[RMDB]
RNA sequence: GGGAACGACUCGAGUAGAGUCGAAAAGAUAUGGAAUAGGUGAACGUGAGGCUGAUGACCUCGGAAACGAGCAAGGCCUCUCACUAUUCCUAAGUCAAACCACUGCUAUGUUCGCAUAGCAGUGGAACAGACAGGAUAGGUUCGCCUAUCCUGUCUGAAAAGAAACAACAACAACAAC
Reactivity to 2A3 in 0.01 (KOAc 150mM, MgCl2 10mM, bicine 150mM(pH8.5), 24C), signal-to-noise 3, nucleotides 027 to 126: g030a020u050a040u160g010g010a020a010u010a030g220g080u160g140a200a050c230g120u120g060a010g010g020c010u000g030a300u160g050a180c000c030u020c000g000g020a050a050a020c010g000a010g010c030a090a090g010g000c000c000u000c010u000c000a030c000u000a010u020u010c000c010u010a090a010g050u010c060a090a030a080c000c000a000c000u000g000c010u000a010u000g070u050u080c270g010c200a000u000a000g000c000a010g000u010g000g000a010a000
Reactivity to DMS in 0.01 (KOAc 150mM, MgCl2 10mM, bicine 150mM(pH8.5), 24C), signal-to-noise 4, nucleotides 027 to 126: g000a050u010a300u000g000g010a010a020u000a000g020g000u010g050a070a100c300g010u000g010a010g010g020c000u000g020a090u000g000a090c300c020u000c000g010g000a090a080a150c010g000a020g010c040a070a110g020g000c010c000u000c000u000c020a050c000u000a020u000u000c010c010u000a040a070g010u000c010a070a140a200c010c000a010c000u000g000c000u010a010u000g000u000u010c210g040c000a020u000a000g000c000a000g010u000g010g000a030a070